Annotation: Conditions: 150 mM KOAc, 10 mM MgCl2 and 150 mM bicine (pH 8.5), 24 C. Structure probing data (DMS) for a 177-nucleotide construct.

[RMDB]
RNA sequence: GGGAACGACUCGAGUAGAGUCGAAAAACCUCGACUUGGCCUUGAAGGAUGACGAUGCCCUCUCCUGCUGAGGCAGAAGCUCAUUCCCAGAGAAGGAUCCAGUAAAGAGGAAGCAUCUGGCAUAUUAAAGCAAGGGAUGUUUCGACAUCCCUUGCUUAAAAGAAACAACAACAACAAC
Reactivity to DMS in 0.01 (KOAc 150mM, MgCl2 10mM, bicine 150mM(pH8.5), 24C), signal-to-noise 1, nucleotides 027 to 126: a080c010c020u040c020g000a140c090u000u020g020g040c050c010u000u000g000a300a250g020g010a040u010g010a050c130g000a230u010g000c060c030c050u000c080u000c100c100u010g030c160u020g010a050g010g000c040a040g040a200a040g000c150u010c000a040u000u010c010c040c030a180g000a170g000a040a120g000g010a180u010c000c040a030g000u000a040a110a180g020a040g000g000a080a140g000c050a040u000c010u000g030g010c190a100u010a060u010u000a160
For DMS, 600 sequencing reads were counted.